[RMDB]
RNA sequence: GGGAACGACUCGAGUAGAGUCGAAAAUAUGUAUCAAACAGUUUGGUAUUAGAAUCAAGGAUCUCCGAACGUAUGGAGUCAAUUAUACGUUUUUAUAUAAUUUUUGGACAAAUGUAAAGUCCAUAUACCAGUAAUUAGCAUUCGUGCUAAUUACUGGAAAAGAAACAACAACAACAAC
Reactivity to DMS in 0.01 (KOAc 150mM, MgCl2 10mM, bicine 150mM(pH8.5), 24C), signal-to-noise 2, nucleotides 027 to 126: u010a090u000g010u000a000u010c040a030a030a230c180a140g010u030u000u010g010g010u000a000u000u000a160g000a150a110u000c090a050a130g050g000a130u010c010u010c000c010g010a040a020c010g010u010a000u000g000g010a050g010u010c220a010a030u000u020a010u000a000c000g000u000u020u010u000u000a090u050a100u070a150a100u000u000u000u010u000g000g000a000c010a090a050a120u010g010u000a100a040a090g010u000c010c000a030u000a070u000a100
Reactivity to 2A3 in 0.01 (KOAc 150mM, MgCl2 10mM, bicine 150mM(pH8.5), 24C), signal-to-noise 2, nucleotides 027 to 126: u160a020u120g000u000a050u060c010a070a000a050c040a140g140u070u040u020g000g010u060a100u060u070a090g120a060a040u120c060a060a050g150g010a140u100c010u000c010c000g020a020a010c020g000u000a000u020g000g010a030g120u040c020a000a030u150u060a000u010a010c010g000u000u000u000u040u060a210u020a020u000a080a290u040u080u000u160u030g000g010a000c040a030a200a020u080g070u190a110a140a060g010u030c020c010a000u010a010u010a100

Background: The record gives the reactivity of an RNA of 177 nucleotides to DMS and 2A3. The RNA was probed in 150 mM KOAc, 10 mM MgCl2 and 150 mM bicine (pH 8.5) at 24 C. It was measured as part of the RMDB library OK2TRN. Reactivities are rounded to 0.1 and cut off at 0 and 3. For 2A3 the reverse transcriptase was SuperScript II with manganese.